Structure probing data (2A3 and DMS) for a 177-nucleotide construct. For 2A3 the reverse transcriptase was SuperScript II with manganese. The reactions ran in a buffer of 150 mM KOAc, 10 mM MgCl2 and 150 mM bicine (pH 8.5), at 24 C. The data come from the RNA Mapping Database (RMDB), library OK2TRN. For DMS the reverse transcriptase was MarathonRT.
RNA sequence: GGGAACGACUCGAGUAGAGUCGAAAAACAGAUCGAUAAACUGAAUAACCAGCUCAUUUAAUAGUUUAAUCGUCAGCGUUUUAGUAUGUUCAUCAACAUCAUUACGUGUAUAGAUGAGUUCGGAAGACGUUCACCCUAUAUUCGUAUAGGGUGAACGAAAAGAAACAACAACAACAAC
Reactivity to 2A3 in 0.01 (KOAc 150mM, MgCl2 10mM, bicine 150mM(pH8.5), 24C), signal-to-noise 4, nucleotides 027 to 126: a000c040a030g060a120u160c050g050a040u110a040a100a070c030u040g070a080a130u150a180a130c010c000a000g010c010u000c000a020u020u080u100a250a210u110a090g060u030u070u170a160a110u090c050g100u080c140a030g010c000g000u000u050u000u020a100g020u070a010u060g020u010u060c100a180u130c090a150a000c000a010u000c010a000u040u060a010c010g020u040g010u100a040u060a220g030a020u020g010a000g010u000u030c050g010g040a040a020g130a040
Reactivity to DMS in 0.01 (KOAc 150mM, MgCl2 10mM, bicine 150mM(pH8.5), 24C), signal-to-noise 3, nucleotides 027 to 126: a080c050a080g000a050u020c040g000a040u000a070a040a080c030u000g010a110a140u020a150a170c040c020a020g000c020u000c040a030u000u000u000a080a110u000a050g000u010u010u000a110a120u010c020g000u010c150a200g000c020g000u000u000u000u000a100g040u010a020u010g010u000u010c220a090u000c160a040a030c010a000u000c030a070u010u000a030c000g020u000g020u000a110u000a040g000a030u010g000a030g040u000u000c130g030g030a120a120g000a140